[RMDB]
RNA sequence: GGGAACGACUCGAGUAGAGUCGAAAAGGCUAUGACUCGUGUCCGUCGGCGUAGCCGACAACAUGCCCAGGUAGCCCAGACCUUCAAGGCUACGGUGCGUUGCGACGCACGGUCUGAUCCUUCACAAAGUAGUCCCGAGUCUUCGGACUCGGGACAAGAGAUUGAUAGUGUUCGCACUAUCAAUCUCAAAAGAAACAACAACAACAAC
Reactivity to 2A3 in 0.01 (KOAc 150mM, MgCl2 10mM, bicine 150mM(pH8.5), 24C), signal-to-noise 1, nucleotides 027 to 156: g010g040c020u000a030u210g000a070c020u000c030g000u020g010u030c040c020g010u000c010g060g030c300g140u250a080g060c000c000g000a000c020a030a000c060a030u170g000c020c000c010a040g020g020u000a030g000c000c000c160a070g020a000c010c000u000u010c010a000a000g000g000c010u000a000c000g030g000u020g040c050g010u060u100g040c160g100a020c030g030c000a000c000g000g000u000c010u050g040a010u040c020c080u150u140c170a110c040a270a140a100g060u110a040g000u130c010c000c000g040a000g000u000c010u000u130c180g060g000a000c000u000c010g000g000g000a000c000a000a000